[RMDB]
RNA sequence: GGGAACGACUCGAGUAGAGUCGAAAACUGCGCGCCGAGGUGCGGGUGGCCUCGUAAAAACCCGCAACGGCAUAACUGCCAACACCAACUACGCUCUCGCGGCUUAAUGACCGCGACCUCGCCCGGUAGCCCUGCCGGGGGCUCACCGGAAGCGGGGGCCACAUUUAAGGUUCGCCUUAAAUGUGGCAAAAGAAACAACAACAACAAC
Reactivity to 2A3 in 0.01 (KOAc 150mM, MgCl2 10mM, bicine 150mM(pH8.5), 24C), signal-to-noise 1, nucleotides 027 to 156: c020u050g000c020g000c000g010c090c000g010a030g020g050u020g000c020g000g000g000u010g070g120c000c010u040c010g040u040a020a000a000a040a040c010c000c000g000c030a040a020c070g000g000c010a020u080a170a060c070u100g000c000c010a100a000c010a010c020c030a090a050c060u160a070c080g020c050u050c030u030c050g000c020g010g000c030u140u210a130a090u240g090a210c000c000g000c000g010a010c000c000u000c000g020c000c000c000g000g000u000a000g000c000c010c030u090g120c070c100g080g000g000g010g030c000u030c060a010c000c000g010g000a030a020g020c000g000g000g000g000